[RMDB]
RNA sequence: GGGAACGACUCGAGUAGAGUCGAAAAAAACGCCGACCGGCUGACGCGGGCGUUUCUGACCGCCGUCGGCGUGUUGCCCGGCGAUACGGUCCGACGCGACCUCCCGAUCUAUCGGCUCACGGACGUCGCUAUGAUUAUCUUUCGAGAUAAUCAUAGCAAAAGAAACAACAACAACAAC
Reactivity to DMS in 0.01 (KOAc 150mM, MgCl2 10mM, bicine 150mM(pH8.5), 24C), signal-to-noise 5, nucleotides 027 to 126: a040a060a040c030g010c000c000g000a050c100c070g030g000c070u000g010a040c110g020c110g020g000g010c130g010u000u010u020c070u000g020a050c050c060g010c070c050g010u000c000g000g020c010g010u000g010u010u000g000c060c010c010g000g010c020g000a060u010a050c080g000g000u000c020c040g000a080c120g010c070g000a080c030c040u000c040c020c020g000a160u010c060u000a120u000c030g010g000c050u000c060a080c050g000g010a080c070g010u000c120
Reactivity to 2A3 in 0.01 (KOAc 150mM, MgCl2 10mM, bicine 150mM(pH8.5), 24C), signal-to-noise 3, nucleotides 027 to 126: a000a000a000c040g010c030c010g020a070c050c130g110g000c060u060g010a010c070g030c030g120g070g000c090g050u050u090u050c050u060g060a070c020c010g030c030c020g030u020c010g050g000c030g000u040g050u020u090g020c010c010c000g010g030c020g010a030u060a200c030g030g020u010c010c020g050a040c040g070c060g040a090c000c010u010c010c010c000g020a050u030c010u060a070u070c020g000g020c030u020c030a070c030g060g040a020c020g040u050c060
The record gives the reactivity of an RNA of 177 nucleotides to DMS and 2A3. It was measured as part of the RMDB library OK2TST. The reactions ran in a buffer of 150 mM KOAc, 10 mM MgCl2 and 150 mM bicine (pH 8.5), at 24 C. 2A3 adducts were read by reverse transcription with SuperScript II with manganese.